[RMDB]
RNA sequence: GGGAACGACUCGAGUAGAGUCGAAAAUCAAAGAGUGCGUAACAGCUCACUGGUCGAGUGGACAUGCGCCGACAAUACACGGGGCUAAGCUCUGAACCGAAGCGGCGGGAUGAUUCAAAUCAUCGGUCGCAGUAAAAAUAUUCGUAUUUUUACUGCGAAAAGAAACAACAACAACAAC
Reactivity to 2A3 in 0.01 (KOAc 150mM, MgCl2 10mM, bicine 150mM(pH8.5), 24C), signal-to-noise 9, nucleotides 027 to 126: u130c040a040a060a010g070a030g030u090g030c040g060u090a120a060c030a080g010c010u020c020a060c050u060g030g030u040c020g020a040g030u050g020g060a040c050a110u100g000c040g030c010c010g040a050c060a060a070u130a130c060a020c080g010g000g000g000c010u040a050a030g010c000u000c020u050g040a070a030c010c010g020a070a010g020c010g050g010c000g010g070g000a000u010g010a010u060u130c080a110a120a090u020c010a020u010c020g050g020u020
Reactivity to DMS in 0.01 (KOAc 150mM, MgCl2 10mM, bicine 150mM(pH8.5), 24C), signal-to-noise 6, nucleotides 027 to 126: u020c060a090a080a100g010a070g010u010g020c040g020u010a100a090c150a130g010c030u000c040a060c060u020g020g010u000c050g010a070g030u000g010g000a080c130a110u020g010c030g010c000c020g000a050c150a080a070u020a110c210a160c040g010g000g020g000c010u010a070a160g000c020u010c000u000g010a050a090c080c030g000a130a060g010c020g010g000c010g010g010g010a010u000g000a010u000u020c190a090a100a100u000c020a000u000c010g010g010u000
An RNA of 177 nucleotides, treated with 2A3 and DMS and read out base by base. The data come from the RNA Mapping Database (RMDB), libraries RFM100 and RFMREP. DMS adducts were read by reverse transcription with MarathonRT.